Structure probing data (2A3) for a 177-nucleotide construct. Source: RMDB library VIROID, as collected in RNAgym. The reactions ran in a buffer of 150 mM KOAc, 10 mM MgCl2 and 150 mM bicine (pH 8.5), at 24 C.

RNA sequence: GGGAACGACUCGAGUAGAGUCGAAAAGGAGGCACUUGGAGCAUGGGGGGCCAGUGGAGCCAUGGGAUGCUCCUCCCGAUGUCCGUCCUCCCUCCCCCCCGAGGGUCGCCCAGGAAUGGCGGGACCCGACGUUCACACAGUUCGCUGUGUGAACGUCAAAAGAAACAACAACAACAAC
Reactivity to 2A3 in 0.01 (KOAc 150mM, MgCl2 10mM, bicine 150mM(pH8.5), 24C), signal-to-noise 1, nucleotides 027 to 126: g020g020a000g010g000c100a010c110u180u270g020g000a090g100c030a040u100g010g020g000g050g030g090c080c040a010g010u140g040g030a020g040c020c020a040u100g090g070g090a070u100g000c000u010c010c020u070c000c000c000g080a020u000g030u010c010c000g030u010c010c010u000c000c020c000u000c000c000c020c000c010c010c000g050a140g020g020g010u070c050g140c040c010c000a000g080g070a140a010u040g010g000c090g040g010g000a010c040c000c010